An RNA of 177 nucleotides, treated with 2A3 and DMS and read out base by base. 2A3 is a SHAPE reagent: it acylates the 2'-hydroxyl of flexible nucleotides of all four kinds. Conditions: 150 mM KOAc, 10 mM MgCl2 and 150 mM bicine (pH 8.5), 24 C. The DMS profile rests on 2,510 reads. DMS adducts were read by reverse transcription with MarathonRT.

RNA sequence: GGGAACGACUCGAGUAGAGUCGAAAAGGAAAUGAUAGCUACUUUCUGCGUCUGUAUGUAUGAGUUAUUGGGGGCAUUUCGAACCAGUGACAAACAUUUUGUUAAGCAAUCUGGUGAUGCAUUAAGAAGAAUAGUCUCUGUUCGCAGAGACUAUUCUAAAAGAAACAACAACAACAAC
Reactivity to 2A3 in 0.01 (KOAc 150mM, MgCl2 10mM, bicine 150mM(pH8.5), 24C), signal-to-noise 1, nucleotides 027 to 126: g060g010a080a090a060u150g010a060u060a020g060c040u040a000c030u030u080u010c020u000g030c000g050u000c050u070g060u080a050u070g070u020a050u150g100a060g090u060u130a070u110u140g000g000g030g060g080c110a080u010u100u080c000g010a010a020c030c010a010g020u000g040a010c010a010a120a000c020a020u070u180u060u050g040u060u050a100a000g010c000a000a070u050c010u030g060g000u040g080a030u070g010c030a020u080u080a020a070g090a020
Reactivity to DMS in 0.01 (KOAc 150mM, MgCl2 10mM, bicine 150mM(pH8.5), 24C), signal-to-noise 3, nucleotides 027 to 126: g010g010a050a030a070u000g010a080u000a060g020c050u000a110c080u000u000u000c050u000g000c040g020u010c030u010g010u000a020u000g000u000a060u010g000a130g010u000u000a030u000u010g010g010g010g010g000c080a070u000u010u000c060g010a140a090c020c020a030g000u000g000a120c040a090a040a100c100a070u000u000u010u010g010u020u010a080a150g020c060a040a060u000c020u010g010g010u000g000a070u000g010c060a040u000u010a070a110g010a130